[RMDB]
RNA sequence: GGGAACGACUCGAGUAGAGUCGAAAAUCCCUAGUCUUCGGACUAGGGAAAAGCGACGCCUGCAGCGCGCGGUCGCGGAGGGCAGGCGUCGCCCACUCGGCAAAACUUCAUGCUUCGGCAUGAAGAAGCUUAUGUCUUAGUUCGCUAAGACAUAAGCAAAAGAAACAACAACAACAAC
Reactivity to 2A3 in 0.01 (KOAc 150mM, MgCl2 10mM, bicine 150mM(pH8.5), 24C), signal-to-noise 3, nucleotides 027 to 126: u000c000c000c000u000a000g000u000c000u020u070c300g070g000a000c000u000a010g010g000g000a060a100a000a010g010c020g000a000c020g010c010c020u030g020c030a090g060c050g000c030g050c190g200g170u290c100g000c100g030g070a170g040g170g010c000a000g000g010c000g000u010c000g020c000c000c000a040c010u060c040g190g000c070a050a060a080a140c000u000u010c000a000u000g000c000u040u040c230g090g000c000a010u000g000a000a000g000a000a000
Reactivity to DMS in 0.01 (KOAc 150mM, MgCl2 10mM, bicine 150mM(pH8.5), 24C), signal-to-noise 2, nucleotides 027 to 126: u000c000c000c000u000a000g010u000c000u000u010c190g020g010a030c000u000a010g000g000g000a000a010a080a160g020c000g050a020c010g000c000c000u000g040c000a080g000c040g000c020g030c200g030g000u000c100g020c020g020g010a150g010g020g030c010a020g000g010c020g010u000c020g000c000c010c030a090c140u000c070g000g020c190a060a100a090a150c010u000u000c000a000u000g010c000u010u020c240g030g030c000a000u000g000a010a000g000a060a070
Chemical mapping of a 177-nucleotide RNA with 2A3 and DMS. Values are in units of 0.01, from 0 to 300, in steps of 10. The DMS profile rests on 2,419 reads. Values cover nucleotides 27 to 126. The 2A3 profile rests on 6,442 reads.